Record summary
An RNA of 207 nucleotides, treated with 2A3 and read out base by base. Reactivities are given for positions 27 through 156. The reactions ran in a buffer of 150 mM KOAc, 10 mM MgCl2 and 150 mM bicine (pH 8.5), at 24 C. The 2A3 profile rests on 717 reads.

RNA sequence: GGGAACGACUCGAGUAGAGUCGAAAAGGGUUUUGCGAUCUUUAAGCAGAUGGCAGGUUCACCCCGUAGGGUGCGGAAGUUCGCGCUUCCGUGAAACGCGAAAAUCGGACGGUGGCUGCAAGUCGCAUUGAAGGGAUCGCCUUCGGGCGAUCCCUAACUAACUUGGUUGAUUCGUCAACCAAGUUAGAAAAGAAACAACAACAACAAC
Reactivity to 2A3 in 0.01 (KOAc 150mM, MgCl2 10mM, bicine 150mM(pH8.5), 24C), signal-to-noise 2, nucleotides 027 to 156: g060g020g000u050u070u140u150g030c050g030a080u090c070u080u250u190a100a050g000c080a090g040a180u170g100g000c070a060g010g070u150u100c020a000c000c000c030c020g060u090a100g030g240g000u060g000c000g000g010a030a000g010u080u170c040g020c030g000c090u010u010c010c010g020u090g080a100a040a020c190g000c010g050a050a010a000a060u110c000g000g010a020c110g010g020u010g000g020c010u020g010c030a030a000g060u000c040g050c110a080u000u080g020a040a040g020g000g010a000u000c010g020c000c020u000u050c090g160g000g000c000g000a000u020c030c000c000u000a000a000